The record gives the reactivity of an RNA of 207 nucleotides to DMS and 2A3. For DMS, 2,694 sequencing reads were counted. The RNA was probed in 150 mM KOAc, 10 mM MgCl2 and 150 mM bicine (pH 8.5) at 24 C. The 2A3 profile rests on 1,558 reads.
[RMDB]
RNA sequence: GGGAACGACUCGAGUAGAGUCGAAAAGAUUCCUCGUUGUUGAGCGAGGUUUAAUCAAAUCGACCACACAAACGUAGAGCCGACUACGGAUUUAUAAAUUAAGGCAUUAAGUGUGAUAAGGAGACAAAAAACGAUGUUGUGUUCGCACAACAUCGAAGAUUGUUGCUUACUUCGGUAAGCAACAAUCAAAAGAAACAACAACAACAAC
Reactivity to DMS in 0.01 (KOAc 150mM, MgCl2 10mM, bicine 150mM(pH8.5), 24C), signal-to-noise 2, nucleotides 027 to 156: g000a250u010u000c000c000u030c060g020u000u020g000u010u000g000a150g000c050g020a080g050g030u000u010u000a040a100u000c000a040a150a160u000c030g020a040c020c000a040c040a140c030a110a100a090c040g020u000a040g000a150g010c020c020g040a090c000u000a000c010g020g020a170u040u000u000a040u000a080a040a030u000u000a050a060g030g010c020a240u000u020a030a170g030u010g030u020g000a060u000a030a100g020g000a220g010a100c060a000a030a070a090a060a210c060g000a030u010g000u000u000g040u000g010u000u010c300g040c020a000c000a030a000c000a000u000c010g000a010a050
Reactivity to 2A3 in 0.01 (KOAc 150mM, MgCl2 10mM, bicine 150mM(pH8.5), 24C), signal-to-noise 3, nucleotides 027 to 156: g020a020u060u070c000c000u000c010g020u000u150g060u070u110g050a010g030c020g010a010g050g050u070u110u100a020a010u020c020a090a030a040u070c040g050a020c020c020a020c020a000c000a070a150a000c010g000u000a000g000a000g010c010c020g010a010c010u000a010c000g000g020a010u020u300u040a160u150a100a050a010u110u150a000a000g000g020c000a000u110u230a160a090g000u010g000u000g020a030u050a100a090g140g010a080g010a070c120a050a140a030a050a010a010c010g000a000u000g000u000u000g010u000g040u050u050c120g080c050a000c000a000a000c000a000u010c000g010a010a000